[RMDB]
RNA sequence: GGGAACGACUCGAGUAGAGUCGAAAAUGACAUCUUCACCAACCUCUCAUCGUUCCCUUCUCUGUAAUAACGUCGUUUUGCAAAACUGCAAUGGUCCUGAGCCGAUAAGCCUCUAAUGAAAUUAUAGGAAUAGGAAAAGGUUCGCCUUUUCCUAUUCAAAAGAAACAACAACAACAAC
Reactivity to DMS in 0.01 (KOAc 150mM, MgCl2 10mM, bicine 150mM(pH8.5), 24C), signal-to-noise 4, nucleotides 027 to 126: u000g010a070c050a300u010c040u010u000c040a080c070c090a080a060c050c000u000c020u000c050a150u000c020g000u010u000c000c010c000u000u000c020u010c020u010g030u010a090a080u030a070a100c100g020u010c040g000u000u000u000u010g010c050a030a040a110a100c150u000g020c040a050a060u000g020g000u000c030c030u000g000a130g020c030c030g000a030u000a060a100g010c040c020u000c040u000a060a080u000g010a080a040a100u010u010a120u020a100g010
Reactivity to 2A3 in 0.01 (KOAc 150mM, MgCl2 10mM, bicine 150mM(pH8.5), 24C), signal-to-noise 3, nucleotides 027 to 126: u080g020a010c000a140u020c030u080u040c030a050c030c020a030a060c010c010u000c010u020c020a030u030c010g020u020u000c000c000c000u020u010c010u000c000u020g030u030a030a080u020a130a030c050g030u040c020g000u050u020u100u060g000c010a050a070a100a140c040u030g000c050a030a070u040g030g000u020c030c020u030g020a000g020c000c010g020a060u030a090a020g010c030c000u010c000u070a120a090u120g090a100a080a050u210u110a100u100a100g090